[RMDB]
Conditions: 150 mM KOAc, 10 mM MgCl2 and 150 mM bicine (pH 8.5), 24 C. Structure probing data (2A3) for a 207-nucleotide construct.

RNA sequence: GGGAACGACUCGAGUAGAGUCGAAAACUCUUUUACUCGGCAUGAUACCACCGUUAUCGGGUCAACAGAGUUGUUGCAAAUGACAACAAUGCUCAGGGUUAUGCUCUCGCUGCCUAAUGGCGGUGCGCGGACGACUCAAUGUUCGCAUUGAGUCGAACGUCCUGGUCUACUUCGGUAGACCAGGACGAAAAGAAACAACAACAACAAC
Reactivity to 2A3 in 0.01 (KOAc 150mM, MgCl2 10mM, bicine 150mM(pH8.5), 24C), signal-to-noise 1, nucleotides 027 to 156: c050u040c000u060u080u020u240a090c060u010c000g000g000c020a030u120g010a040u090a080c010c000a000c000c000g040u060u010a050u070c000g020g000g020u000c010a030a030c080a000g090a030g020u030u010g000u000u070g000c020a020a090a270u080g020a050c020a020a000c000a000a110u040g050c050u030c180a050g050g000g010u130u050a040u300g000c070u010c030u090c030g000c040u030g000c000c000u230a260a080u210g000g000c050g040g000u050g040c150g000c040g080g110a060c000g000a000c000u000c000a000a010u070g000u070u180c260g000c030a000u020u020g000a000g000u000c000g000a000a000